[RMDB]
RNA sequence: GGGAACGACUCGAGUAGAGUCGAAAAGAGAGGACGGCGAGUGGCCAAAUGAGGUAGCUGAGCCAUUGAAGCCAGCUUGGAAUGUGGCUCAUGAUCUGAGGAAUCCAAUCAUUCAAUUGGGUGAAAAUUGACUAAAUCCAUUCGUGGAUUUAGUCAAAAAAGAAACAACAACAACAAC
Reactivity to DMS in 0.01 (KOAc 150mM, MgCl2 10mM, bicine 150mM(pH8.5), 24C), signal-to-noise 8, nucleotides 027 to 126: g010a100g010a080g010g000a070c110g010g010c050g000a070g030u010g000g010c030c040a040a070a080u010g010a100g000g010u000a060g020c100u010g000a060g020c020c020a050u030u010g010a130a160g010c010c010a070g010c140u020u020g010g010a060a060u020g010u000g000g000c000u000c020a050u010g010a060u010c050u010g010a090g010g010a130a040u010c010c010a020a040u010c140a100u040u030c170a070a070u000u010g010g010g020u010g000a050a050a060a120
Reactivity to 2A3 in 0.01 (KOAc 150mM, MgCl2 10mM, bicine 150mM(pH8.5), 24C), signal-to-noise 4, nucleotides 027 to 126: g070a000g000a010g010g060a010c030g000g040c020g020a060g030u080g060g000c000c000a010a080a060u130g010a030g080g060u070a010g030c040u030g010a020g010c000c000a030u020u100g050a060a020g020c040c010a010g060c060u070u100g030g030a060a010u100g020u030g050g010c000u010c020a030u140g040a040u030c040u050g030a020g010g060a070a000u020c010c000a010a040u050c020a030u160u120c020a060a100u120u050g030g020g010u060g040a050a020a050a100
Chemical mapping of a 177-nucleotide RNA with DMS and 2A3. For 2A3 the reverse transcriptase was SuperScript II with manganese. For DMS the reverse transcriptase was MarathonRT.